Description:
Structure probing data (2A3 and DMS) for a 177-nucleotide construct. The DMS profile rests on 2,701 reads. The RNA was probed in 150 mM KOAc, 10 mM MgCl2 and 150 mM bicine (pH 8.5) at 24 C. DMS adducts were read by reverse transcription with MarathonRT.
[RMDB]
RNA sequence: GGGAACGACUCGAGUAGAGUCGAAAAGAUAUGGAUCUAAGGAGCUUUUGACGAGCGGAUCGGAAACGAUGCGCUCGAUAAGCUCCUAGAUCCUAAGUCAAAAUCCCUGAUGUUCGCAUCAGGGAAACUUUUUUCAAUUGUUCGCAAUUGAAAAAAGAAAAGAAACAACAACAACAAC
Reactivity to 2A3 in 0.01 (KOAc 150mM, MgCl2 10mM, bicine 150mM(pH8.5), 24C), signal-to-noise 2, nucleotides 027 to 126: g010a000u060a030u090g000g010a020u000c010u070a140a300g000g000a000g000c040u120u300u300u300g300a050c010g010a000g000c020g000g160a000u000c010g030g000a030a010a020c000g000a010u100g140c020g000c060u000c000g010a010u000a020a000g000c000u020c000c000u010a000g000a010u000c000c000u010a000a000g020u000c010a010a040a020a300u050c000c000c000u000g010a000u010g010u070u070c300g030c150a000u000c000a000g000g000g000a040a000a010
Reactivity to DMS in 0.01 (KOAc 150mM, MgCl2 10mM, bicine 150mM(pH8.5), 24C), signal-to-noise 2, nucleotides 027 to 126: g000a030u010a250u010g020g000a020u000c000u020a030a140g010g000a010g000c000u000u000u010u000g000a180c080g010a010g020c010g010g000a000u010c000g010g000a040a030a110c000g020a010u000g000c010g010c020u000c010g010a010u000a010a020g010c000u000c000c000u000a000g000a000u000c000c000u000a010a040g000u000c010a100a080a160a130u000c000c000c000u010g000a010u000g010u000u010c270g010c000a000u000c000a010g000g010g010a000a000a020
Background:
The data come from the RNA Mapping Database (RMDB), library TTRDEL.